[RMDB]
RNA sequence: GGGAACGACUCGAGUAGAGUCGAAAAGAGUACUAGGAGGUUGUAGGGAGGAAUACCAGGUAUUACAGAAGGGAUCACUUAGAGCUUGGUGAGUGGGUGGAUAAGUAGGUGCCUGAGAGAGGUCAGGCCGGAUACAAUUAUUCGUAAUUGUAUCCGGAAAAGAAACAACAACAACAAC
Reactivity to 2A3 in 0.01 (KOAc 150mM, MgCl2 10mM, bicine 150mM(pH8.5), 24C), signal-to-noise 5, nucleotides 027 to 126: g040a020g040u090a050c060u080a040g100g030a020g060g040u100u080g040u140a030g010g050g030a080g010g040a050a040u080a090c010c010a010g070g000u070a070u100u150a100c060a050g090a070a060g090g010g020a070u100c020a020c090u030u090a030g000a000g160c020u070u040g010g010u020g020a040g010u140g010g010g020u070g000g010a050u040a120a020g090u090a050g040g080u060g010c000c000u030g000a020g000a010g010a000g020g080u010c010a000g000g040
Reactivity to DMS in 0.01 (KOAc 150mM, MgCl2 10mM, bicine 150mM(pH8.5), 24C), signal-to-noise 4, nucleotides 027 to 126: g010a110g020u010a060c090u000a100g010g010a110g010g000u000u000g020u010a080g010g000g010a090g000g010a120a080u000a070c030c040a050g010g010u000a100u010u000a100c160a110g010a100a070g010g000g000a100u010c080a080c050u000u000a100g010a110g000c040u000u000g010g010u000g010a090g010u010g000g010g010u000g000g000a060u000a040a060g010u000a050g010g020u000g010c020c010u000g000a060g000a110g000a100g000g010u000c020a020g000g000